[RMDB]
RNA sequence: GGGAACGACUCGAGUAGAGUCGAAAAGCUCGCGGGUCAGGGCAUAAUAUGUCGCUUCCAAUAGGAAUUGUAGCUCAUGCAGUUUCUCAUGUGCGAAGAUCUCCUCCUUCUAAACUGACACUAAAUACACCACUCAGUGAUUCGUCACUGAGUGGUGAAAAGAAACAACAACAACAAC
Reactivity to 2A3 in 0.01 (KOAc 150mM, MgCl2 10mM, bicine 150mM(pH8.5), 24C), signal-to-noise 8, nucleotides 027 to 126: g030c010u030c040g030c050g020g020g010u050c030a070g040g000g000c040a010u110a120a070u110a180u170g050u060c030g010c070u050u030c020c000a070a130u150a090g020g030a030a030u030u150g010u090a020g000c030u030c060a010u040g000c030a020g030u010u060u010c030u010c030a020u050g020u040g030c030g050a080a010g010a030u030c040u000c060c010u030c000c030u120u090c050u140a060a100a180c060u080g080a020c040a020c080u090a060a110a060u180a040
Reactivity to DMS in 0.01 (KOAc 150mM, MgCl2 10mM, bicine 150mM(pH8.5), 24C), signal-to-noise 3, nucleotides 027 to 126: g010c010u020c000g000c040g010g000g000u020c040a060g060g030g020c020a090u030a060a050u070a300u000g030u000c000g000c060u000u010c000c000a100a110u040a110g000g000a010a030u000u010g000u000a200g010c060u010c050a050u000g000c140a020g050u000u000u000c010u000c040a010u000g020u020g000c030g000a140a240g000a100u000c080u000c010c000u000c060c050u000u000c080u020a030a080a180c130u000g010a090c130a090c170u010a040a050a130u020a210
Chemical mapping of a 177-nucleotide RNA with 2A3 and DMS. Reactivities are given for positions 27 through 126. The DMS profile rests on 2,960 reads. Source: RMDB library OK1LIB, as collected in RNAgym. DMS adducts were read by reverse transcription with MarathonRT.